RNA sequence: GGGAACGACUCGAGUAGAGUCGAAAAGUGCCUCGUCGGCCCGGCAUGCCAACCUGAUCCGAAGUUCAAGGUGGUUUCUCUGGCCUUCCAGAGAGAUGCGCGUGGGAAGAACCGACGAACAAACCUUAAAACAAAACGACGUUCGCGUCGUUUUGAAGCAAAAACGUUAGUUCGCUAACGUUUUUGCAAAAGAAACAACAACAACAAC
Reactivity to DMS in 0.01 (KOAc 150mM, MgCl2 10mM, bicine 150mM(pH8.5), 24C), signal-to-noise 1, nucleotides 027 to 156: g000u000g010c070c030u010c030g030u010c040g030g020c030c010c030g050g030c000a060u000g050c020c040a070a030c010c000u000g040a050u000c080c100g010a170a240g030u000u000c000a090a000g010g000u000g070g020u000u000u000c000u000c030u030g000g010c270c080u000u000c000c000a050g030a030g030a090g000a010u000g010c030g010c050g010u000g080g010g010a210a110g020a070a180c020c000g000a010c010g020a030a060c060a080a120a180c060c000u000u000a000a050a160a250c000a000a000a000a000c020g000a010c000g030u030u010c300g010c010g030u000c000g030u010u000u010u040g000a090a160
Reactivity to 2A3 in 0.01 (KOAc 150mM, MgCl2 10mM, bicine 150mM(pH8.5), 24C), signal-to-noise 3, nucleotides 027 to 156: g060u030g060c010c020u010c010g010u000c000g000g070c000c010c010g030g000c040a030u080g040c000c000a080a170c070c000u030g020a030u020c050c120g280a250a090g030u070u060c060a080a020g000g000u010g000g000u010u170u010c020u000c000u000g020g020c030c070u210u200c010c010a000g000a000g000a000g000a010u040g010c150g000c020g090u300g010g010g000a090a150g020a120a050c000c010g010a000c020g010a010a010c040a020a030a070c010c000u170u300a020a070a050a050c010a000a020a000a000c000g010a000c010g010u060u060c250g010c020g090u000c000g000u000u000u010u000g000a010a000
Chemical mapping of a 207-nucleotide RNA with DMS and 2A3. The DMS profile rests on 1,655 reads. 2A3 adducts were read by reverse transcription with SuperScript II with manganese. The data come from the RNA Mapping Database (RMDB), library M2RFPK.